The data come from the RNA Mapping Database (RMDB), library OK2TST.
An RNA of 177 nucleotides, treated with 2A3 and DMS and read out base by base.
For DMS, 1,164 sequencing reads were counted.
[RMDB]
RNA sequence: GGGAACGACUCGAGUAGAGUCGAAAACGAUCUUCUGUUCACCCCAUCUUCUGAUAGAACUUAUGUUCACCCGGGGGCAACACCGUUGAUUUCAUAACCGUCCAUGCUUUACCGGUACCACGAAUGCUCAUAGGUUGCCAUUCGUGGCAACCUAUGAAAAAGAAACAACAACAACAAC
Reactivity to 2A3 in 0.01 (KOAc 150mM, MgCl2 10mM, bicine 150mM(pH8.5), 24C), signal-to-noise 2, nucleotides 027 to 126: c000g040a060u000c040u140u040c070u110g040u030u000c010a070c010c000c030c010a040u000c050u220u000c030u080g050a150u090a210g040a030a020c040u300u250a110u300g010u030u010c010a040c060c030c000g040g000g000g000g000c010a020a010c000a030c040c000g030u000u060g040a120u040u130u170c060a050u040a100a110c030c000g010u020c050c000a060u110g000c030u070u060u030a120c040c020g030g030u090a070c050c030a040c070g100a130a050u160g000c010
Reactivity to DMS in 0.01 (KOAc 150mM, MgCl2 10mM, bicine 150mM(pH8.5), 24C), signal-to-noise 2, nucleotides 027 to 126: c050g000a040u010c110u000u000c060u010g010u000u000c100a180c070c000c030c040a160u000c060u000u000c050u000g010a200u010a070g000a030a020c030u000u000a100u040g010u000u010c000a250c060c040c020g020g040g010g000g060c160a060a040c090a050c110c050g000u000u000g000a130u000u000u010c040a060u000a080a070c100c060g020u010c020c020a090u010g010c050u000u000u010a060c050c010g000g010u000a090c050c040a040c090g000a100a040u010g000c140
Values cover nucleotides 27 to 126.